[RMDB]
Chemical mapping of a 177-nucleotide RNA with DMS and 2A3. Reactivities are given for positions 27 through 126. DMS adducts were read by reverse transcription with MarathonRT. The DMS profile rests on 13,470 reads. For 2A3 the reverse transcriptase was SuperScript II with manganese. The RNA was probed in 150 mM KOAc, 10 mM MgCl2 and 150 mM bicine (pH 8.5) at 24 C.

RNA sequence: GGGAACGACUCGAGUAGAGUCGAAAAAGACGUUUUCGGUUGCGUGCUGUCGAGCUUUCACAAUUUCGAGGGAUGGAGGUCUGCAUUGAGUCGAUUAGCUUUACGCGCAGUCGGCGAUCAGCGAAACACCUAGUAAAUGCUUCGGCAUUUACUAGGUAAAAGAAACAACAACAACAAC
Reactivity to DMS in 0.01 (KOAc 150mM, MgCl2 10mM, bicine 150mM(pH8.5), 24C), signal-to-noise 5, nucleotides 027 to 126: a050g010a100c070g000u000u000u010u000c020g020g000u010u000g000c070g020u010g000c020u020g010u010c070g010a130g000c080u000u010u000c070a080c150a080a070u010u030u010c070g000a070g000g000g010a060u010g000g000a050g000g010u020c020u000g000c040a070u020u020g000a170g000u000c010g010a040u010u020a140g020c000u010u020u030a100c210g020c130g000c110a060g010u000c040g030g010c020g000a050u010c040a090g000c050g010a090a080a070c240
Reactivity to 2A3 in 0.01 (KOAc 150mM, MgCl2 10mM, bicine 150mM(pH8.5), 24C), signal-to-noise 8, nucleotides 027 to 126: a000g060a030c060g010u040u030u060u050c040g060g000u040u070g020c040g020u060g020c040u030g040u060c030g030a030g010c020u050u070u090c090a110c060a120a220u060u150u160c060g050a080g010g090g010a060u070g060g030a040g030g050u000c030u050g010c030a100u050u100g040a030g020u010c010g030a040u020u070a030g000c010u040u070u160a070c070g020c000g000c040a010g010u010c000g000g010c000g020a090u060c020a020g030c010g060a050a040a020c060